[RMDB]
RNA sequence: GGGAACGACUCGAGUAGAGUCGAAAACGCGCCCAGCAGCCAGAUGUCGCUUUCUCGUGGCUCUUUCAGGCCUUUGAGCCGCAGGUCGACCACGACAUUGGUGCCCACCUUGCGAUGCAGCGCGAUCAUGUUAUACAACGUUCGCGUUGUAUAACAUAAAAGAAACAACAACAACAAC
Reactivity to DMS in 0.01 (KOAc 150mM, MgCl2 10mM, bicine 150mM(pH8.5), 24C), signal-to-noise 7, nucleotides 027 to 126: c090g000c080g010c020c020c040a150g010c040a190g000c020c030a040g000a040u010g010u010c030g020c090u010u010u010c050u010c060g020u010g000g010c030u000c010u010u020u020c110a210g000g000c020c040u010u020u010g000a070g010c040c010g030c100a080g000g010u010c050g010a110c090c060a090c040g000a060c110a060u010u010g010g020u010g000c030c060c020a100c070c020u010u010g020c100g000a070u020g000c030a060g010c020g010c010g010a090u040c100
Reactivity to 2A3 in 0.01 (KOAc 150mM, MgCl2 10mM, bicine 150mM(pH8.5), 24C), signal-to-noise 9, nucleotides 027 to 126: c030g010c000g030c010c010c000a020g020c020a010g020c010c010a050g010a140u070g050u070c010g020c060u030u100u050c040u030c040g030u030g020g000c020u000c010u050u160u100c070a080g030g040c020c010u110u150u210g050a050g010c010c000g000c030a030g020g050u060c040g020a130c020c020a020c030g040a010c010a050u040u110g050g010u060g020c010c020c000a040c000c010u020u070g010c020g300a300u050g010c030a010g010c010g000c020g020a030u100c040